[RMDB]
RNA sequence: GGGAACGACUCGAGUAGAGUCGAAAACCUAUCCAAAAUGAGAUCCCAUCUUGCACACUGUGCUAAUUUGAGAUUCUCAUGCCUCCUACUUGGAGAGAUCUGGACUAGAAGUCAGGGCAUCUGUCUCAAUACAUUCGUCAGUUCGCUGACGAAUGAACUUUGAGGCAUUGUUCGCAAUGCCUCAAAGAAAAGAAACAACAACAACAAC
Reactivity to DMS in 0.01 (KOAc 150mM, MgCl2 10mM, bicine 150mM(pH8.5), 24C), signal-to-noise 2, nucleotides 027 to 156: c040c030u000a150u000c010c000a050a050a140a120u000g000a020g010a060u000c030c010c020a010u000c090u000u010g010c010a020c020a200c150u000g020u000g000c000u000a040a010u010u000u000g000a000g020a040u000u000c010u000c000a000u000g000c080c000u000c010c020u000a180c150u010u010g010g000a050g010a060g000a090u000c080u010g000g020a080c060u010a080g010a150a130g030u000c090a090g020g040g020c020a100u010c050u010g000u000c010u000c050a050a090u010a160c000a050u000u000c000g020u000c000a030g030u000u000c300g060c000u010g000a010c000g000a000a000u000g030a050a090
Reactivity to 2A3 in 0.01 (KOAc 150mM, MgCl2 10mM, bicine 150mM(pH8.5), 24C), signal-to-noise 4, nucleotides 027 to 156: c010c000u020a060u070c030c030a060a030a030a090u030g000a010g000a020u000c010c010c000a000u000c000u010u030g000c000a030c050a090c210u300g000u020g000c050u140a060a090u020u000u020g030a020g000a030u300u040c000u000c000a010u030g020c000c010u010c000c000u110a300c130u130u240g010g000a010g000a000g000a060u040c040u070g010g030a030c040u060a040g040a200a040g080u020c040a030g020g000g070c040a090u040c080u070g040u000c010u010c050a050a080u090a110c000a000u000u000c000g000u000c000a010g010u060u110c160g040c100u000g000a000c000g000a000a000u000g000a010a000
The data come from the RNA Mapping Database (RMDB), library M2RFPK. Structure probing data (DMS and 2A3) for a 207-nucleotide construct. For DMS, 2,961 sequencing reads were counted. DMS adducts were read by reverse transcription with MarathonRT. For 2A3 the reverse transcriptase was SuperScript II with manganese.